RNA sequence: GGGAACGACUCGAGUAGAGUCGAAAACUCUCAUGUUCGCAUGAGAGAAAAAAGAUAUGGACCCUGAAUUCCUUUUGACGGCUUGGUUUCGGAAACGAAACUCAAGCCGAUAAGGAACAGGGUCCUAAGUCAAAAAAGUAGCUCUUCGGAGCUACAACUUGACAUGUUAGUUCGCUAACAUGUCAAGAAAAGAAACAACAACAACAAC
Reactivity to DMS in 0.01 (KOAc 150mM, MgCl2 10mM, bicine 150mM(pH8.5), 24C), signal-to-noise 1, nucleotides 027 to 156: c020u000c000u010c000a000u010g030u000u010c300g070c020a030u000g010a080g020a090g070a000a060a010a100a070a110g030a090u000a180u000g030g020a040c030c010c010u010g030a040a260u000u000c000c050u000u000u000u010g010a200c060g020g050c000u010u000g020g010u010u020u000c000g020g020a200a050a230c020g030a050a000a000c040u000c010a000a000g060c000c000g010a020u000a010a020g020g040a040a300c020a010g000g000g050u000c000c020u000a000a090g030u010c030a000a050a090a150a240a150g000u000a030g000c000u010c010u000u010c300g030g000a000g020c000u010a010c000a040a040
Reactivity to 2A3 in 0.01 (KOAc 150mM, MgCl2 10mM, bicine 150mM(pH8.5), 24C), signal-to-noise 2, nucleotides 027 to 156: c000u020c000u000c030a030u010g050u090u070c210g000c160a020u010g010a000g000a000g000a160a020a020a010a000a000g010a010u010a000u010g000g000a000c040c000c020u020g060a190a300u080u060c000c000u060u110u140u140g210a120c070g000g000c000u010u000g000g030u000u000u010c010g010g010a000a030a010c000g000a010a010a000c020u060c110a000a000g000c000c000g000a000u010a000a000g010g000a000a030c000a010g010g000g010u000c000c000u000a020a000g000u000c000a000a000a000a070a070a030g010u000a000g020c000u010c020u030u110c300g140g000a000g000c000u010a000c000a000a000
An RNA of 207 nucleotides, treated with DMS and 2A3 and read out base by base. For DMS the reverse transcriptase was MarathonRT. For 2A3 the reverse transcriptase was SuperScript II with manganese. The 2A3 profile rests on 1,303 reads. The data come from the RNA Mapping Database (RMDB), library RNAMAK.